[RMDB]
RNA sequence: GGGAACGACUCGAGUAGAGUCGAAAAGAUAUGGAUCCCAAUAGGGAGAUGUGGAUCGGAAACGAUCCAUACAUCAUCGAUCUAUGGGAUCCUAAGUCAAACACCCCAGAGCUUCGGCUCUGGGGUGGAUCUUACGACUGUUCGCAGUCGUAAGAUCAAAAGAAACAACAACAACAAC
Reactivity to DMS in 0.01 (KOAc 150mM, MgCl2 10mM, bicine 150mM(pH8.5), 24C), signal-to-noise 3, nucleotides 027 to 126: g000a010u000a020u010g020g000a020u010c000c000c010a050a070u000a010g000g000g000a030g000a010u010g020u000g000g010a010u000c000g030g010a020a010a020c010g010a000u000c000c020a010u020a060c230a060u000c010a300u000c260g010a050u000c000u000a020u010g010g010g010a010u000c000c000u000a000a080g000u010c000a190a140a300c010a010c000c010c000c000a000g000a020g030c000u000u020c270g050g020c000u010c000u000g000g000g010g020u000g000
Reactivity to 2A3 in 0.01 (KOAc 150mM, MgCl2 10mM, bicine 150mM(pH8.5), 24C), signal-to-noise 3, nucleotides 027 to 126: g010a000u020a000u060g000g000a010u010c000c000c000a000a030u100a040g010g020g010a070g020a010u000g010u020g020g010a000u010c000g000g000a020a000a000c010g010a010u000c020c000a000u110a030c020a020u010c000a000u300c040g010a010u010c010u030a030u040g010g010g000a000u000c000c000u010a000a000g010u000c000a130a130a040c000a000c000c000c010c010a010g000a000g000c120u300u300c300g180g000c010u020c010u000g020g010g010g000u000g000